[RMDB]
RNA sequence: GGGAACGACUCGAGUAGAGUCGAAAAGUGAGUGCCGGCUGGUCUGGGAACAUUUUUUAACAAGGCCAUAAGGCAGAUCAUUGUGGCUUUUAAAAGGCUUAGUGGCUCCCAGUUAGGAUUUAGUAUAUAUACCUUGAGUCUUCGGACUCAAGGUAUAAAAAGAAACAACAACAACAAC
Reactivity to DMS in 0.01 (KOAc 150mM, MgCl2 10mM, bicine 150mM(pH8.5), 24C), signal-to-noise 1, nucleotides 027 to 126: g000u010g000a070g000u000g020c000c020g000g050c190u000g000g000u000c020u030g010g000g000a080a160c220a020u010u000u010u010u000u000a030a230c110a040a020g000g020c000c000a020u000a190a130g010g000c110a050g020a100u000c020a060u000u010g020u000g000g000c000u000u000u000u010a030a070a150a160g000g000c060u000u000a080g040u000g030g010c100u000c010c030c000a100g000u000u000a100g010g000a070u000u000u000a070g010u000a070u000a200